[RMDB]
RNA sequence: GGGAACGACUCGAGUAGAGUCGAAAAGAUUAAAGUGGCUCAGCACGCCCUAAAAACUGACGGACAAAUGACCAACAAUAACUUGUUGCUCAGUAAGUUGGCUGAAGUUGAUACCAAACCGCAGUUGAUUCAGCAGUUACUUCGGUAACUGCUGAAUAAAAGAAACAACAACAACAAC
Reactivity to DMS in 0.01 (KOAc 150mM, MgCl2 10mM, bicine 150mM(pH8.5), 24C), signal-to-noise 2, nucleotides 027 to 126: g000a140u030u010a060a100a100g020u010g000g020c060u000c010a060g030c020a060c110g000c010c000c040u010a030a080a060a050a010c010u010g000a120c050g010g020a170c230a060a130a070u000g010a050c110c010a040a040c030a040a010u000a100a100c240u000u000g000u000u000g030c290u000c000a020g020u000a040a180g000u010u010g000g040c020u000g000a070a050g040u010u010g020a200u010a090c020c060a030a050a140c030c010g000c010a040g000u000u010g000
The record gives the reactivity of an RNA of 177 nucleotides to DMS. Conditions: 150 mM KOAc, 10 mM MgCl2 and 150 mM bicine (pH 8.5), 24 C. Values cover nucleotides 27 to 126. The data come from the RNA Mapping Database (RMDB), library OK2TST. High DMS reactivity at an A or C suggests that its Watson-Crick edge is free. The DMS profile rests on 801 reads.